[RMDB]
RNA sequence: GGGAACGACUCGAGUAGAGUCGAAAACUUCAAUGGUUCGCCAUUGAAGAAACAUGGAAAACGCUGACACCAUGAAAGAUCGAAAAACGAUCAAAGCGUAAAAAAGUAGUCAGUUCGCUGACUACAACAUCCUCGUUAGGUUCGCCUAACGAGGAUGAAAAGAAACAACAACAACAAC
Reactivity to DMS in 0.01 (KOAc 150mM, MgCl2 10mM, bicine 150mM(pH8.5), 24C), signal-to-noise 2, nucleotides 027 to 126: c010u010u000c010a020a010u000g000g020u010u020c300g060c000c000a020u000u000g000a030a030g000a120a050a140c050a050u000g020g010a050a070a040a020c000g020c020u000g010a200c210a080c000c000a000u000g010a040a120a100g000a010u000c000g020a120a040a050a050a220c030g020a020u000c000a060a060a100g000c030g000u010a000a040a150a080a050a090g020u000a000g010u000c000a000g000u000u010c230g010c010u000g000a020c020u000a000c000a070a110
Reactivity to 2A3 in 0.01 (KOAc 150mM, MgCl2 10mM, bicine 150mM(pH8.5), 24C), signal-to-noise 1, nucleotides 027 to 126: c010u000u000c000a000a010u020g000g050u040u040c160g020c090c000a000u000u000g000a000a000g020a030a030a000c010a020u000g000g000a050a080a050a000c010g010c050u040g050a050c050a010c080c000a010u010g000a090a070a030g000a000u020c020g060a220a040a000a000a140c010g010a000u000c010a010a050a010g010c030g000u080a100a080a030a000a000a050g000u000a010g010u000c020a010g010u010u050c140g010c140u010g000a000c000u000a000c000a000a000